[RMDB]
RNA sequence: GGGAACGACUCGAGUAGAGUCGAAAAAGCGGCAGGAGUAAGACCAUAGCGAUAGGAGGAGAUGCUAGGAGUGAGGGGAGUCCCGAGCGAGGAGGAAAGUAAAGAAAGCAACGGGGCUAGCAGGUGGCAAACCCAUUAGGUUCGCCUAAUGGGUUUGAAAAGAAACAACAACAACAAC
Reactivity to DMS in 0.01 (KOAc 150mM, MgCl2 10mM, bicine 150mM(pH8.5), 24C), signal-to-noise 1, nucleotides 027 to 126: a070g010c040g010g030c070a070g040g010a080g000u010a070a070g000a100c050c050a090u000a070g010c110g010a120u000a080g010g020a050g000g000a060g000a040u000g010c040u000a060g030g010a060g020u010g030a100g010g000g020g060a120g020u000c010c010c020g000a120g020c060g000a050g010g000a060g020g000a020a040a050g030u030a060a050a110g000a040a070a100g000c080a060a060c120g020g010g000g020c010u000a040g030c070a070g000g020u000g000g000

Source: RMDB library VIROID, as collected in RNAgym. An RNA of 177 nucleotides, treated with DMS and read out base by base. DMS adducts were read by reverse transcription with MarathonRT.